[RMDB]
RNA sequence: GGGAACGACUCGAGUAGAGUCGAAAACAACCUGUUGAUGCAGGUAGUGUGUAUCAUGCGAAUCGUUCUGCGAUUCGUAACUGCAGGUUGCUCCGGUUGAUCGAUAGAUUGUAAGGUUUGUCGGUCGAGUAGUAAAUUGAUUCGUCAAUUUACUACUAAAAGAAACAACAACAACAAC
Reactivity to 2A3 in 0.01 (KOAc 150mM, MgCl2 10mM, bicine 150mM(pH8.5), 24C), signal-to-noise 9, nucleotides 027 to 126: c000a000a000c000c000u000g010u030u050g010a010u010g000c010a010g130g120u220a140g110u160g020u000g000u090a010u010c010a010u020g000c000g000a000a000u000c000g010u110u150c120u300g030c000g000a000u000u000c000g000u000a010a020c030u090g000c000a000g000g000u000u000g010c020u000c010c000g110g030u100u160g000a000u000c000g000a000u000a010g020a010u010u060g140u270a130a130g060g000u010u000u010g010u000c000g000g000u000c010g000
Reactivity to DMS in 0.01 (KOAc 150mM, MgCl2 10mM, bicine 150mM(pH8.5), 24C), signal-to-noise 9, nucleotides 027 to 126: c010a010a010c000c000u000g010u000u010g010a020u000g010c000a040g020g010u020a070g020u020g010u000g010u000a010u000c010a230u000g010c000g000a010a000u000c000g010u000u040c260u040g010c010g000a010u000u000c000g020u000a010a180c300u020g000c000a010g000g000u000u000g000c050u000c010c020g000g010u020u010g000a010u000c000g000a020u000a010g010a010u000u000g000u030a130a140g010g010u000u000u000g010u000c000g010g000u000c010g000